An RNA of 177 nucleotides, treated with DMS and 2A3 and read out base by base. Reactivities are rounded to 0.1 and cut off at 0 and 3. In probing experiments dimethyl sulfate is read out at A N1 and C N3, which are open when not base-paired. The 2A3 profile rests on 1,845 reads.

RNA sequence: GGGAACGACUCGAGUAGAGUCGAAAAACAUACUAUAUAUUGCCCCAGGCGGGAUGAAGGGGCUGAGUGGGCGCAUGCCCUCAAUGAAGCCACUUGCGAACUUGGGGCGACAGGCGGUGUCGAGACGCCUCGCGUCACAAUUCGUUGUGACGCGAGGAAAAGAAACAACAACAACAAC
Reactivity to DMS in 0.01 (KOAc 150mM, MgCl2 10mM, bicine 150mM(pH8.5), 24C), signal-to-noise 3, nucleotides 027 to 126: a120c090a080u070a120c090u040a090u040a120u060a180u020u010g010c000c000c000c000a020g000g030c020g010g010g010a060u050g000a050a020g000g000g000g020c020u000g000a050g000u000g010g000g000c020g000c280a080u040g020c000c000c010u000c020a090a070u040g000a130a050g000c000c000a020c010u000u000g000c010g000a150a130c000u000u010g000g000g000g010c000g020a040c100a020g030g000c030g000g010u000g010u020c040g000a110g000a090c100g010
Reactivity to 2A3 in 0.01 (KOAc 150mM, MgCl2 10mM, bicine 150mM(pH8.5), 24C), signal-to-noise 3, nucleotides 027 to 126: a010c010a040u230a050c050u030a030u110a070u040a030u190u170g000c000c000c000c000a000g030g020c020g020g110g080a110u160g110a080a000g010g000g000g000c000u000g000a040g010u020g000g000g000c070g000c120a110u300g000c000c030c000u020c020a040a100u140g050a030a000g030c000c000a020c040u000u040g080c020g050a090a050c010u050u000g000g000g000g000c010g030a010c000a000g030g130c030g070g000u050g030u100c060g000a010g020a030c030g010